[RMDB]
Notes: Conditions: 150 mM KOAc, 10 mM MgCl2 and 150 mM bicine (pH 8.5), 24 C. The record gives the reactivity of an RNA of 177 nucleotides to 2A3 and DMS.

RNA sequence: GGGAACGACUCGAGUAGAGUCGAAAACACCCAAGGGCAUUCCGCUGAGUGUUUUUGGAUGGGGGUGUACUGGUCUCGACAGGGCGGACAAAGGUGCGCAGGCAACUCGUCAGGCGAUCGACGUUAAUCUACGGAGAUCUUUCGAGAUCUCCGUAGAAAAAGAAACAACAACAACAAC
Reactivity to 2A3 in 0.01 (KOAc 150mM, MgCl2 10mM, bicine 150mM(pH8.5), 24C), signal-to-noise 3, nucleotides 027 to 126: c080a060c000c010c010a040a070g020g000g010c030a070u120u030c070c040g050c190u090g040a040g040u050g030u020u010u010u080u060g150g030a100u070g020g030g050g000g040u020g010u030a050c000u040g020g020u020c000u000c020g020a030c030a070g000g040g000c030g020g020a010c030a010a140a020g050g000u060g010c010g040c010a010g000g040c010a030a080c030u010c010g090u040c020a010g000g030c020g030a040u030c050g010a020c020g030u020u070a070a040
Reactivity to DMS in 0.01 (KOAc 150mM, MgCl2 10mM, bicine 150mM(pH8.5), 24C), signal-to-noise 3, nucleotides 027 to 126: c080a130c040c010c010a130a060g000g020g030c080a040u020u020c030c180g010c110u050g000a070g010u010g020u000u000u000u000u000g000g000a060u010g020g020g020g000g010u000g000u000a040c070u000g010g000u000c020u010c060g020a110c070a080g000g020g000c060g000g000a040c150a030a120a070g000g010u000g020c040g000c040a030g000g000c030a060a070c080u020c080g000u000c050a070g000g000c050g000a060u000c040g010a040c080g010u010u010a090a120

It was measured as part of the RMDB libraries RFM100 and RFMREP.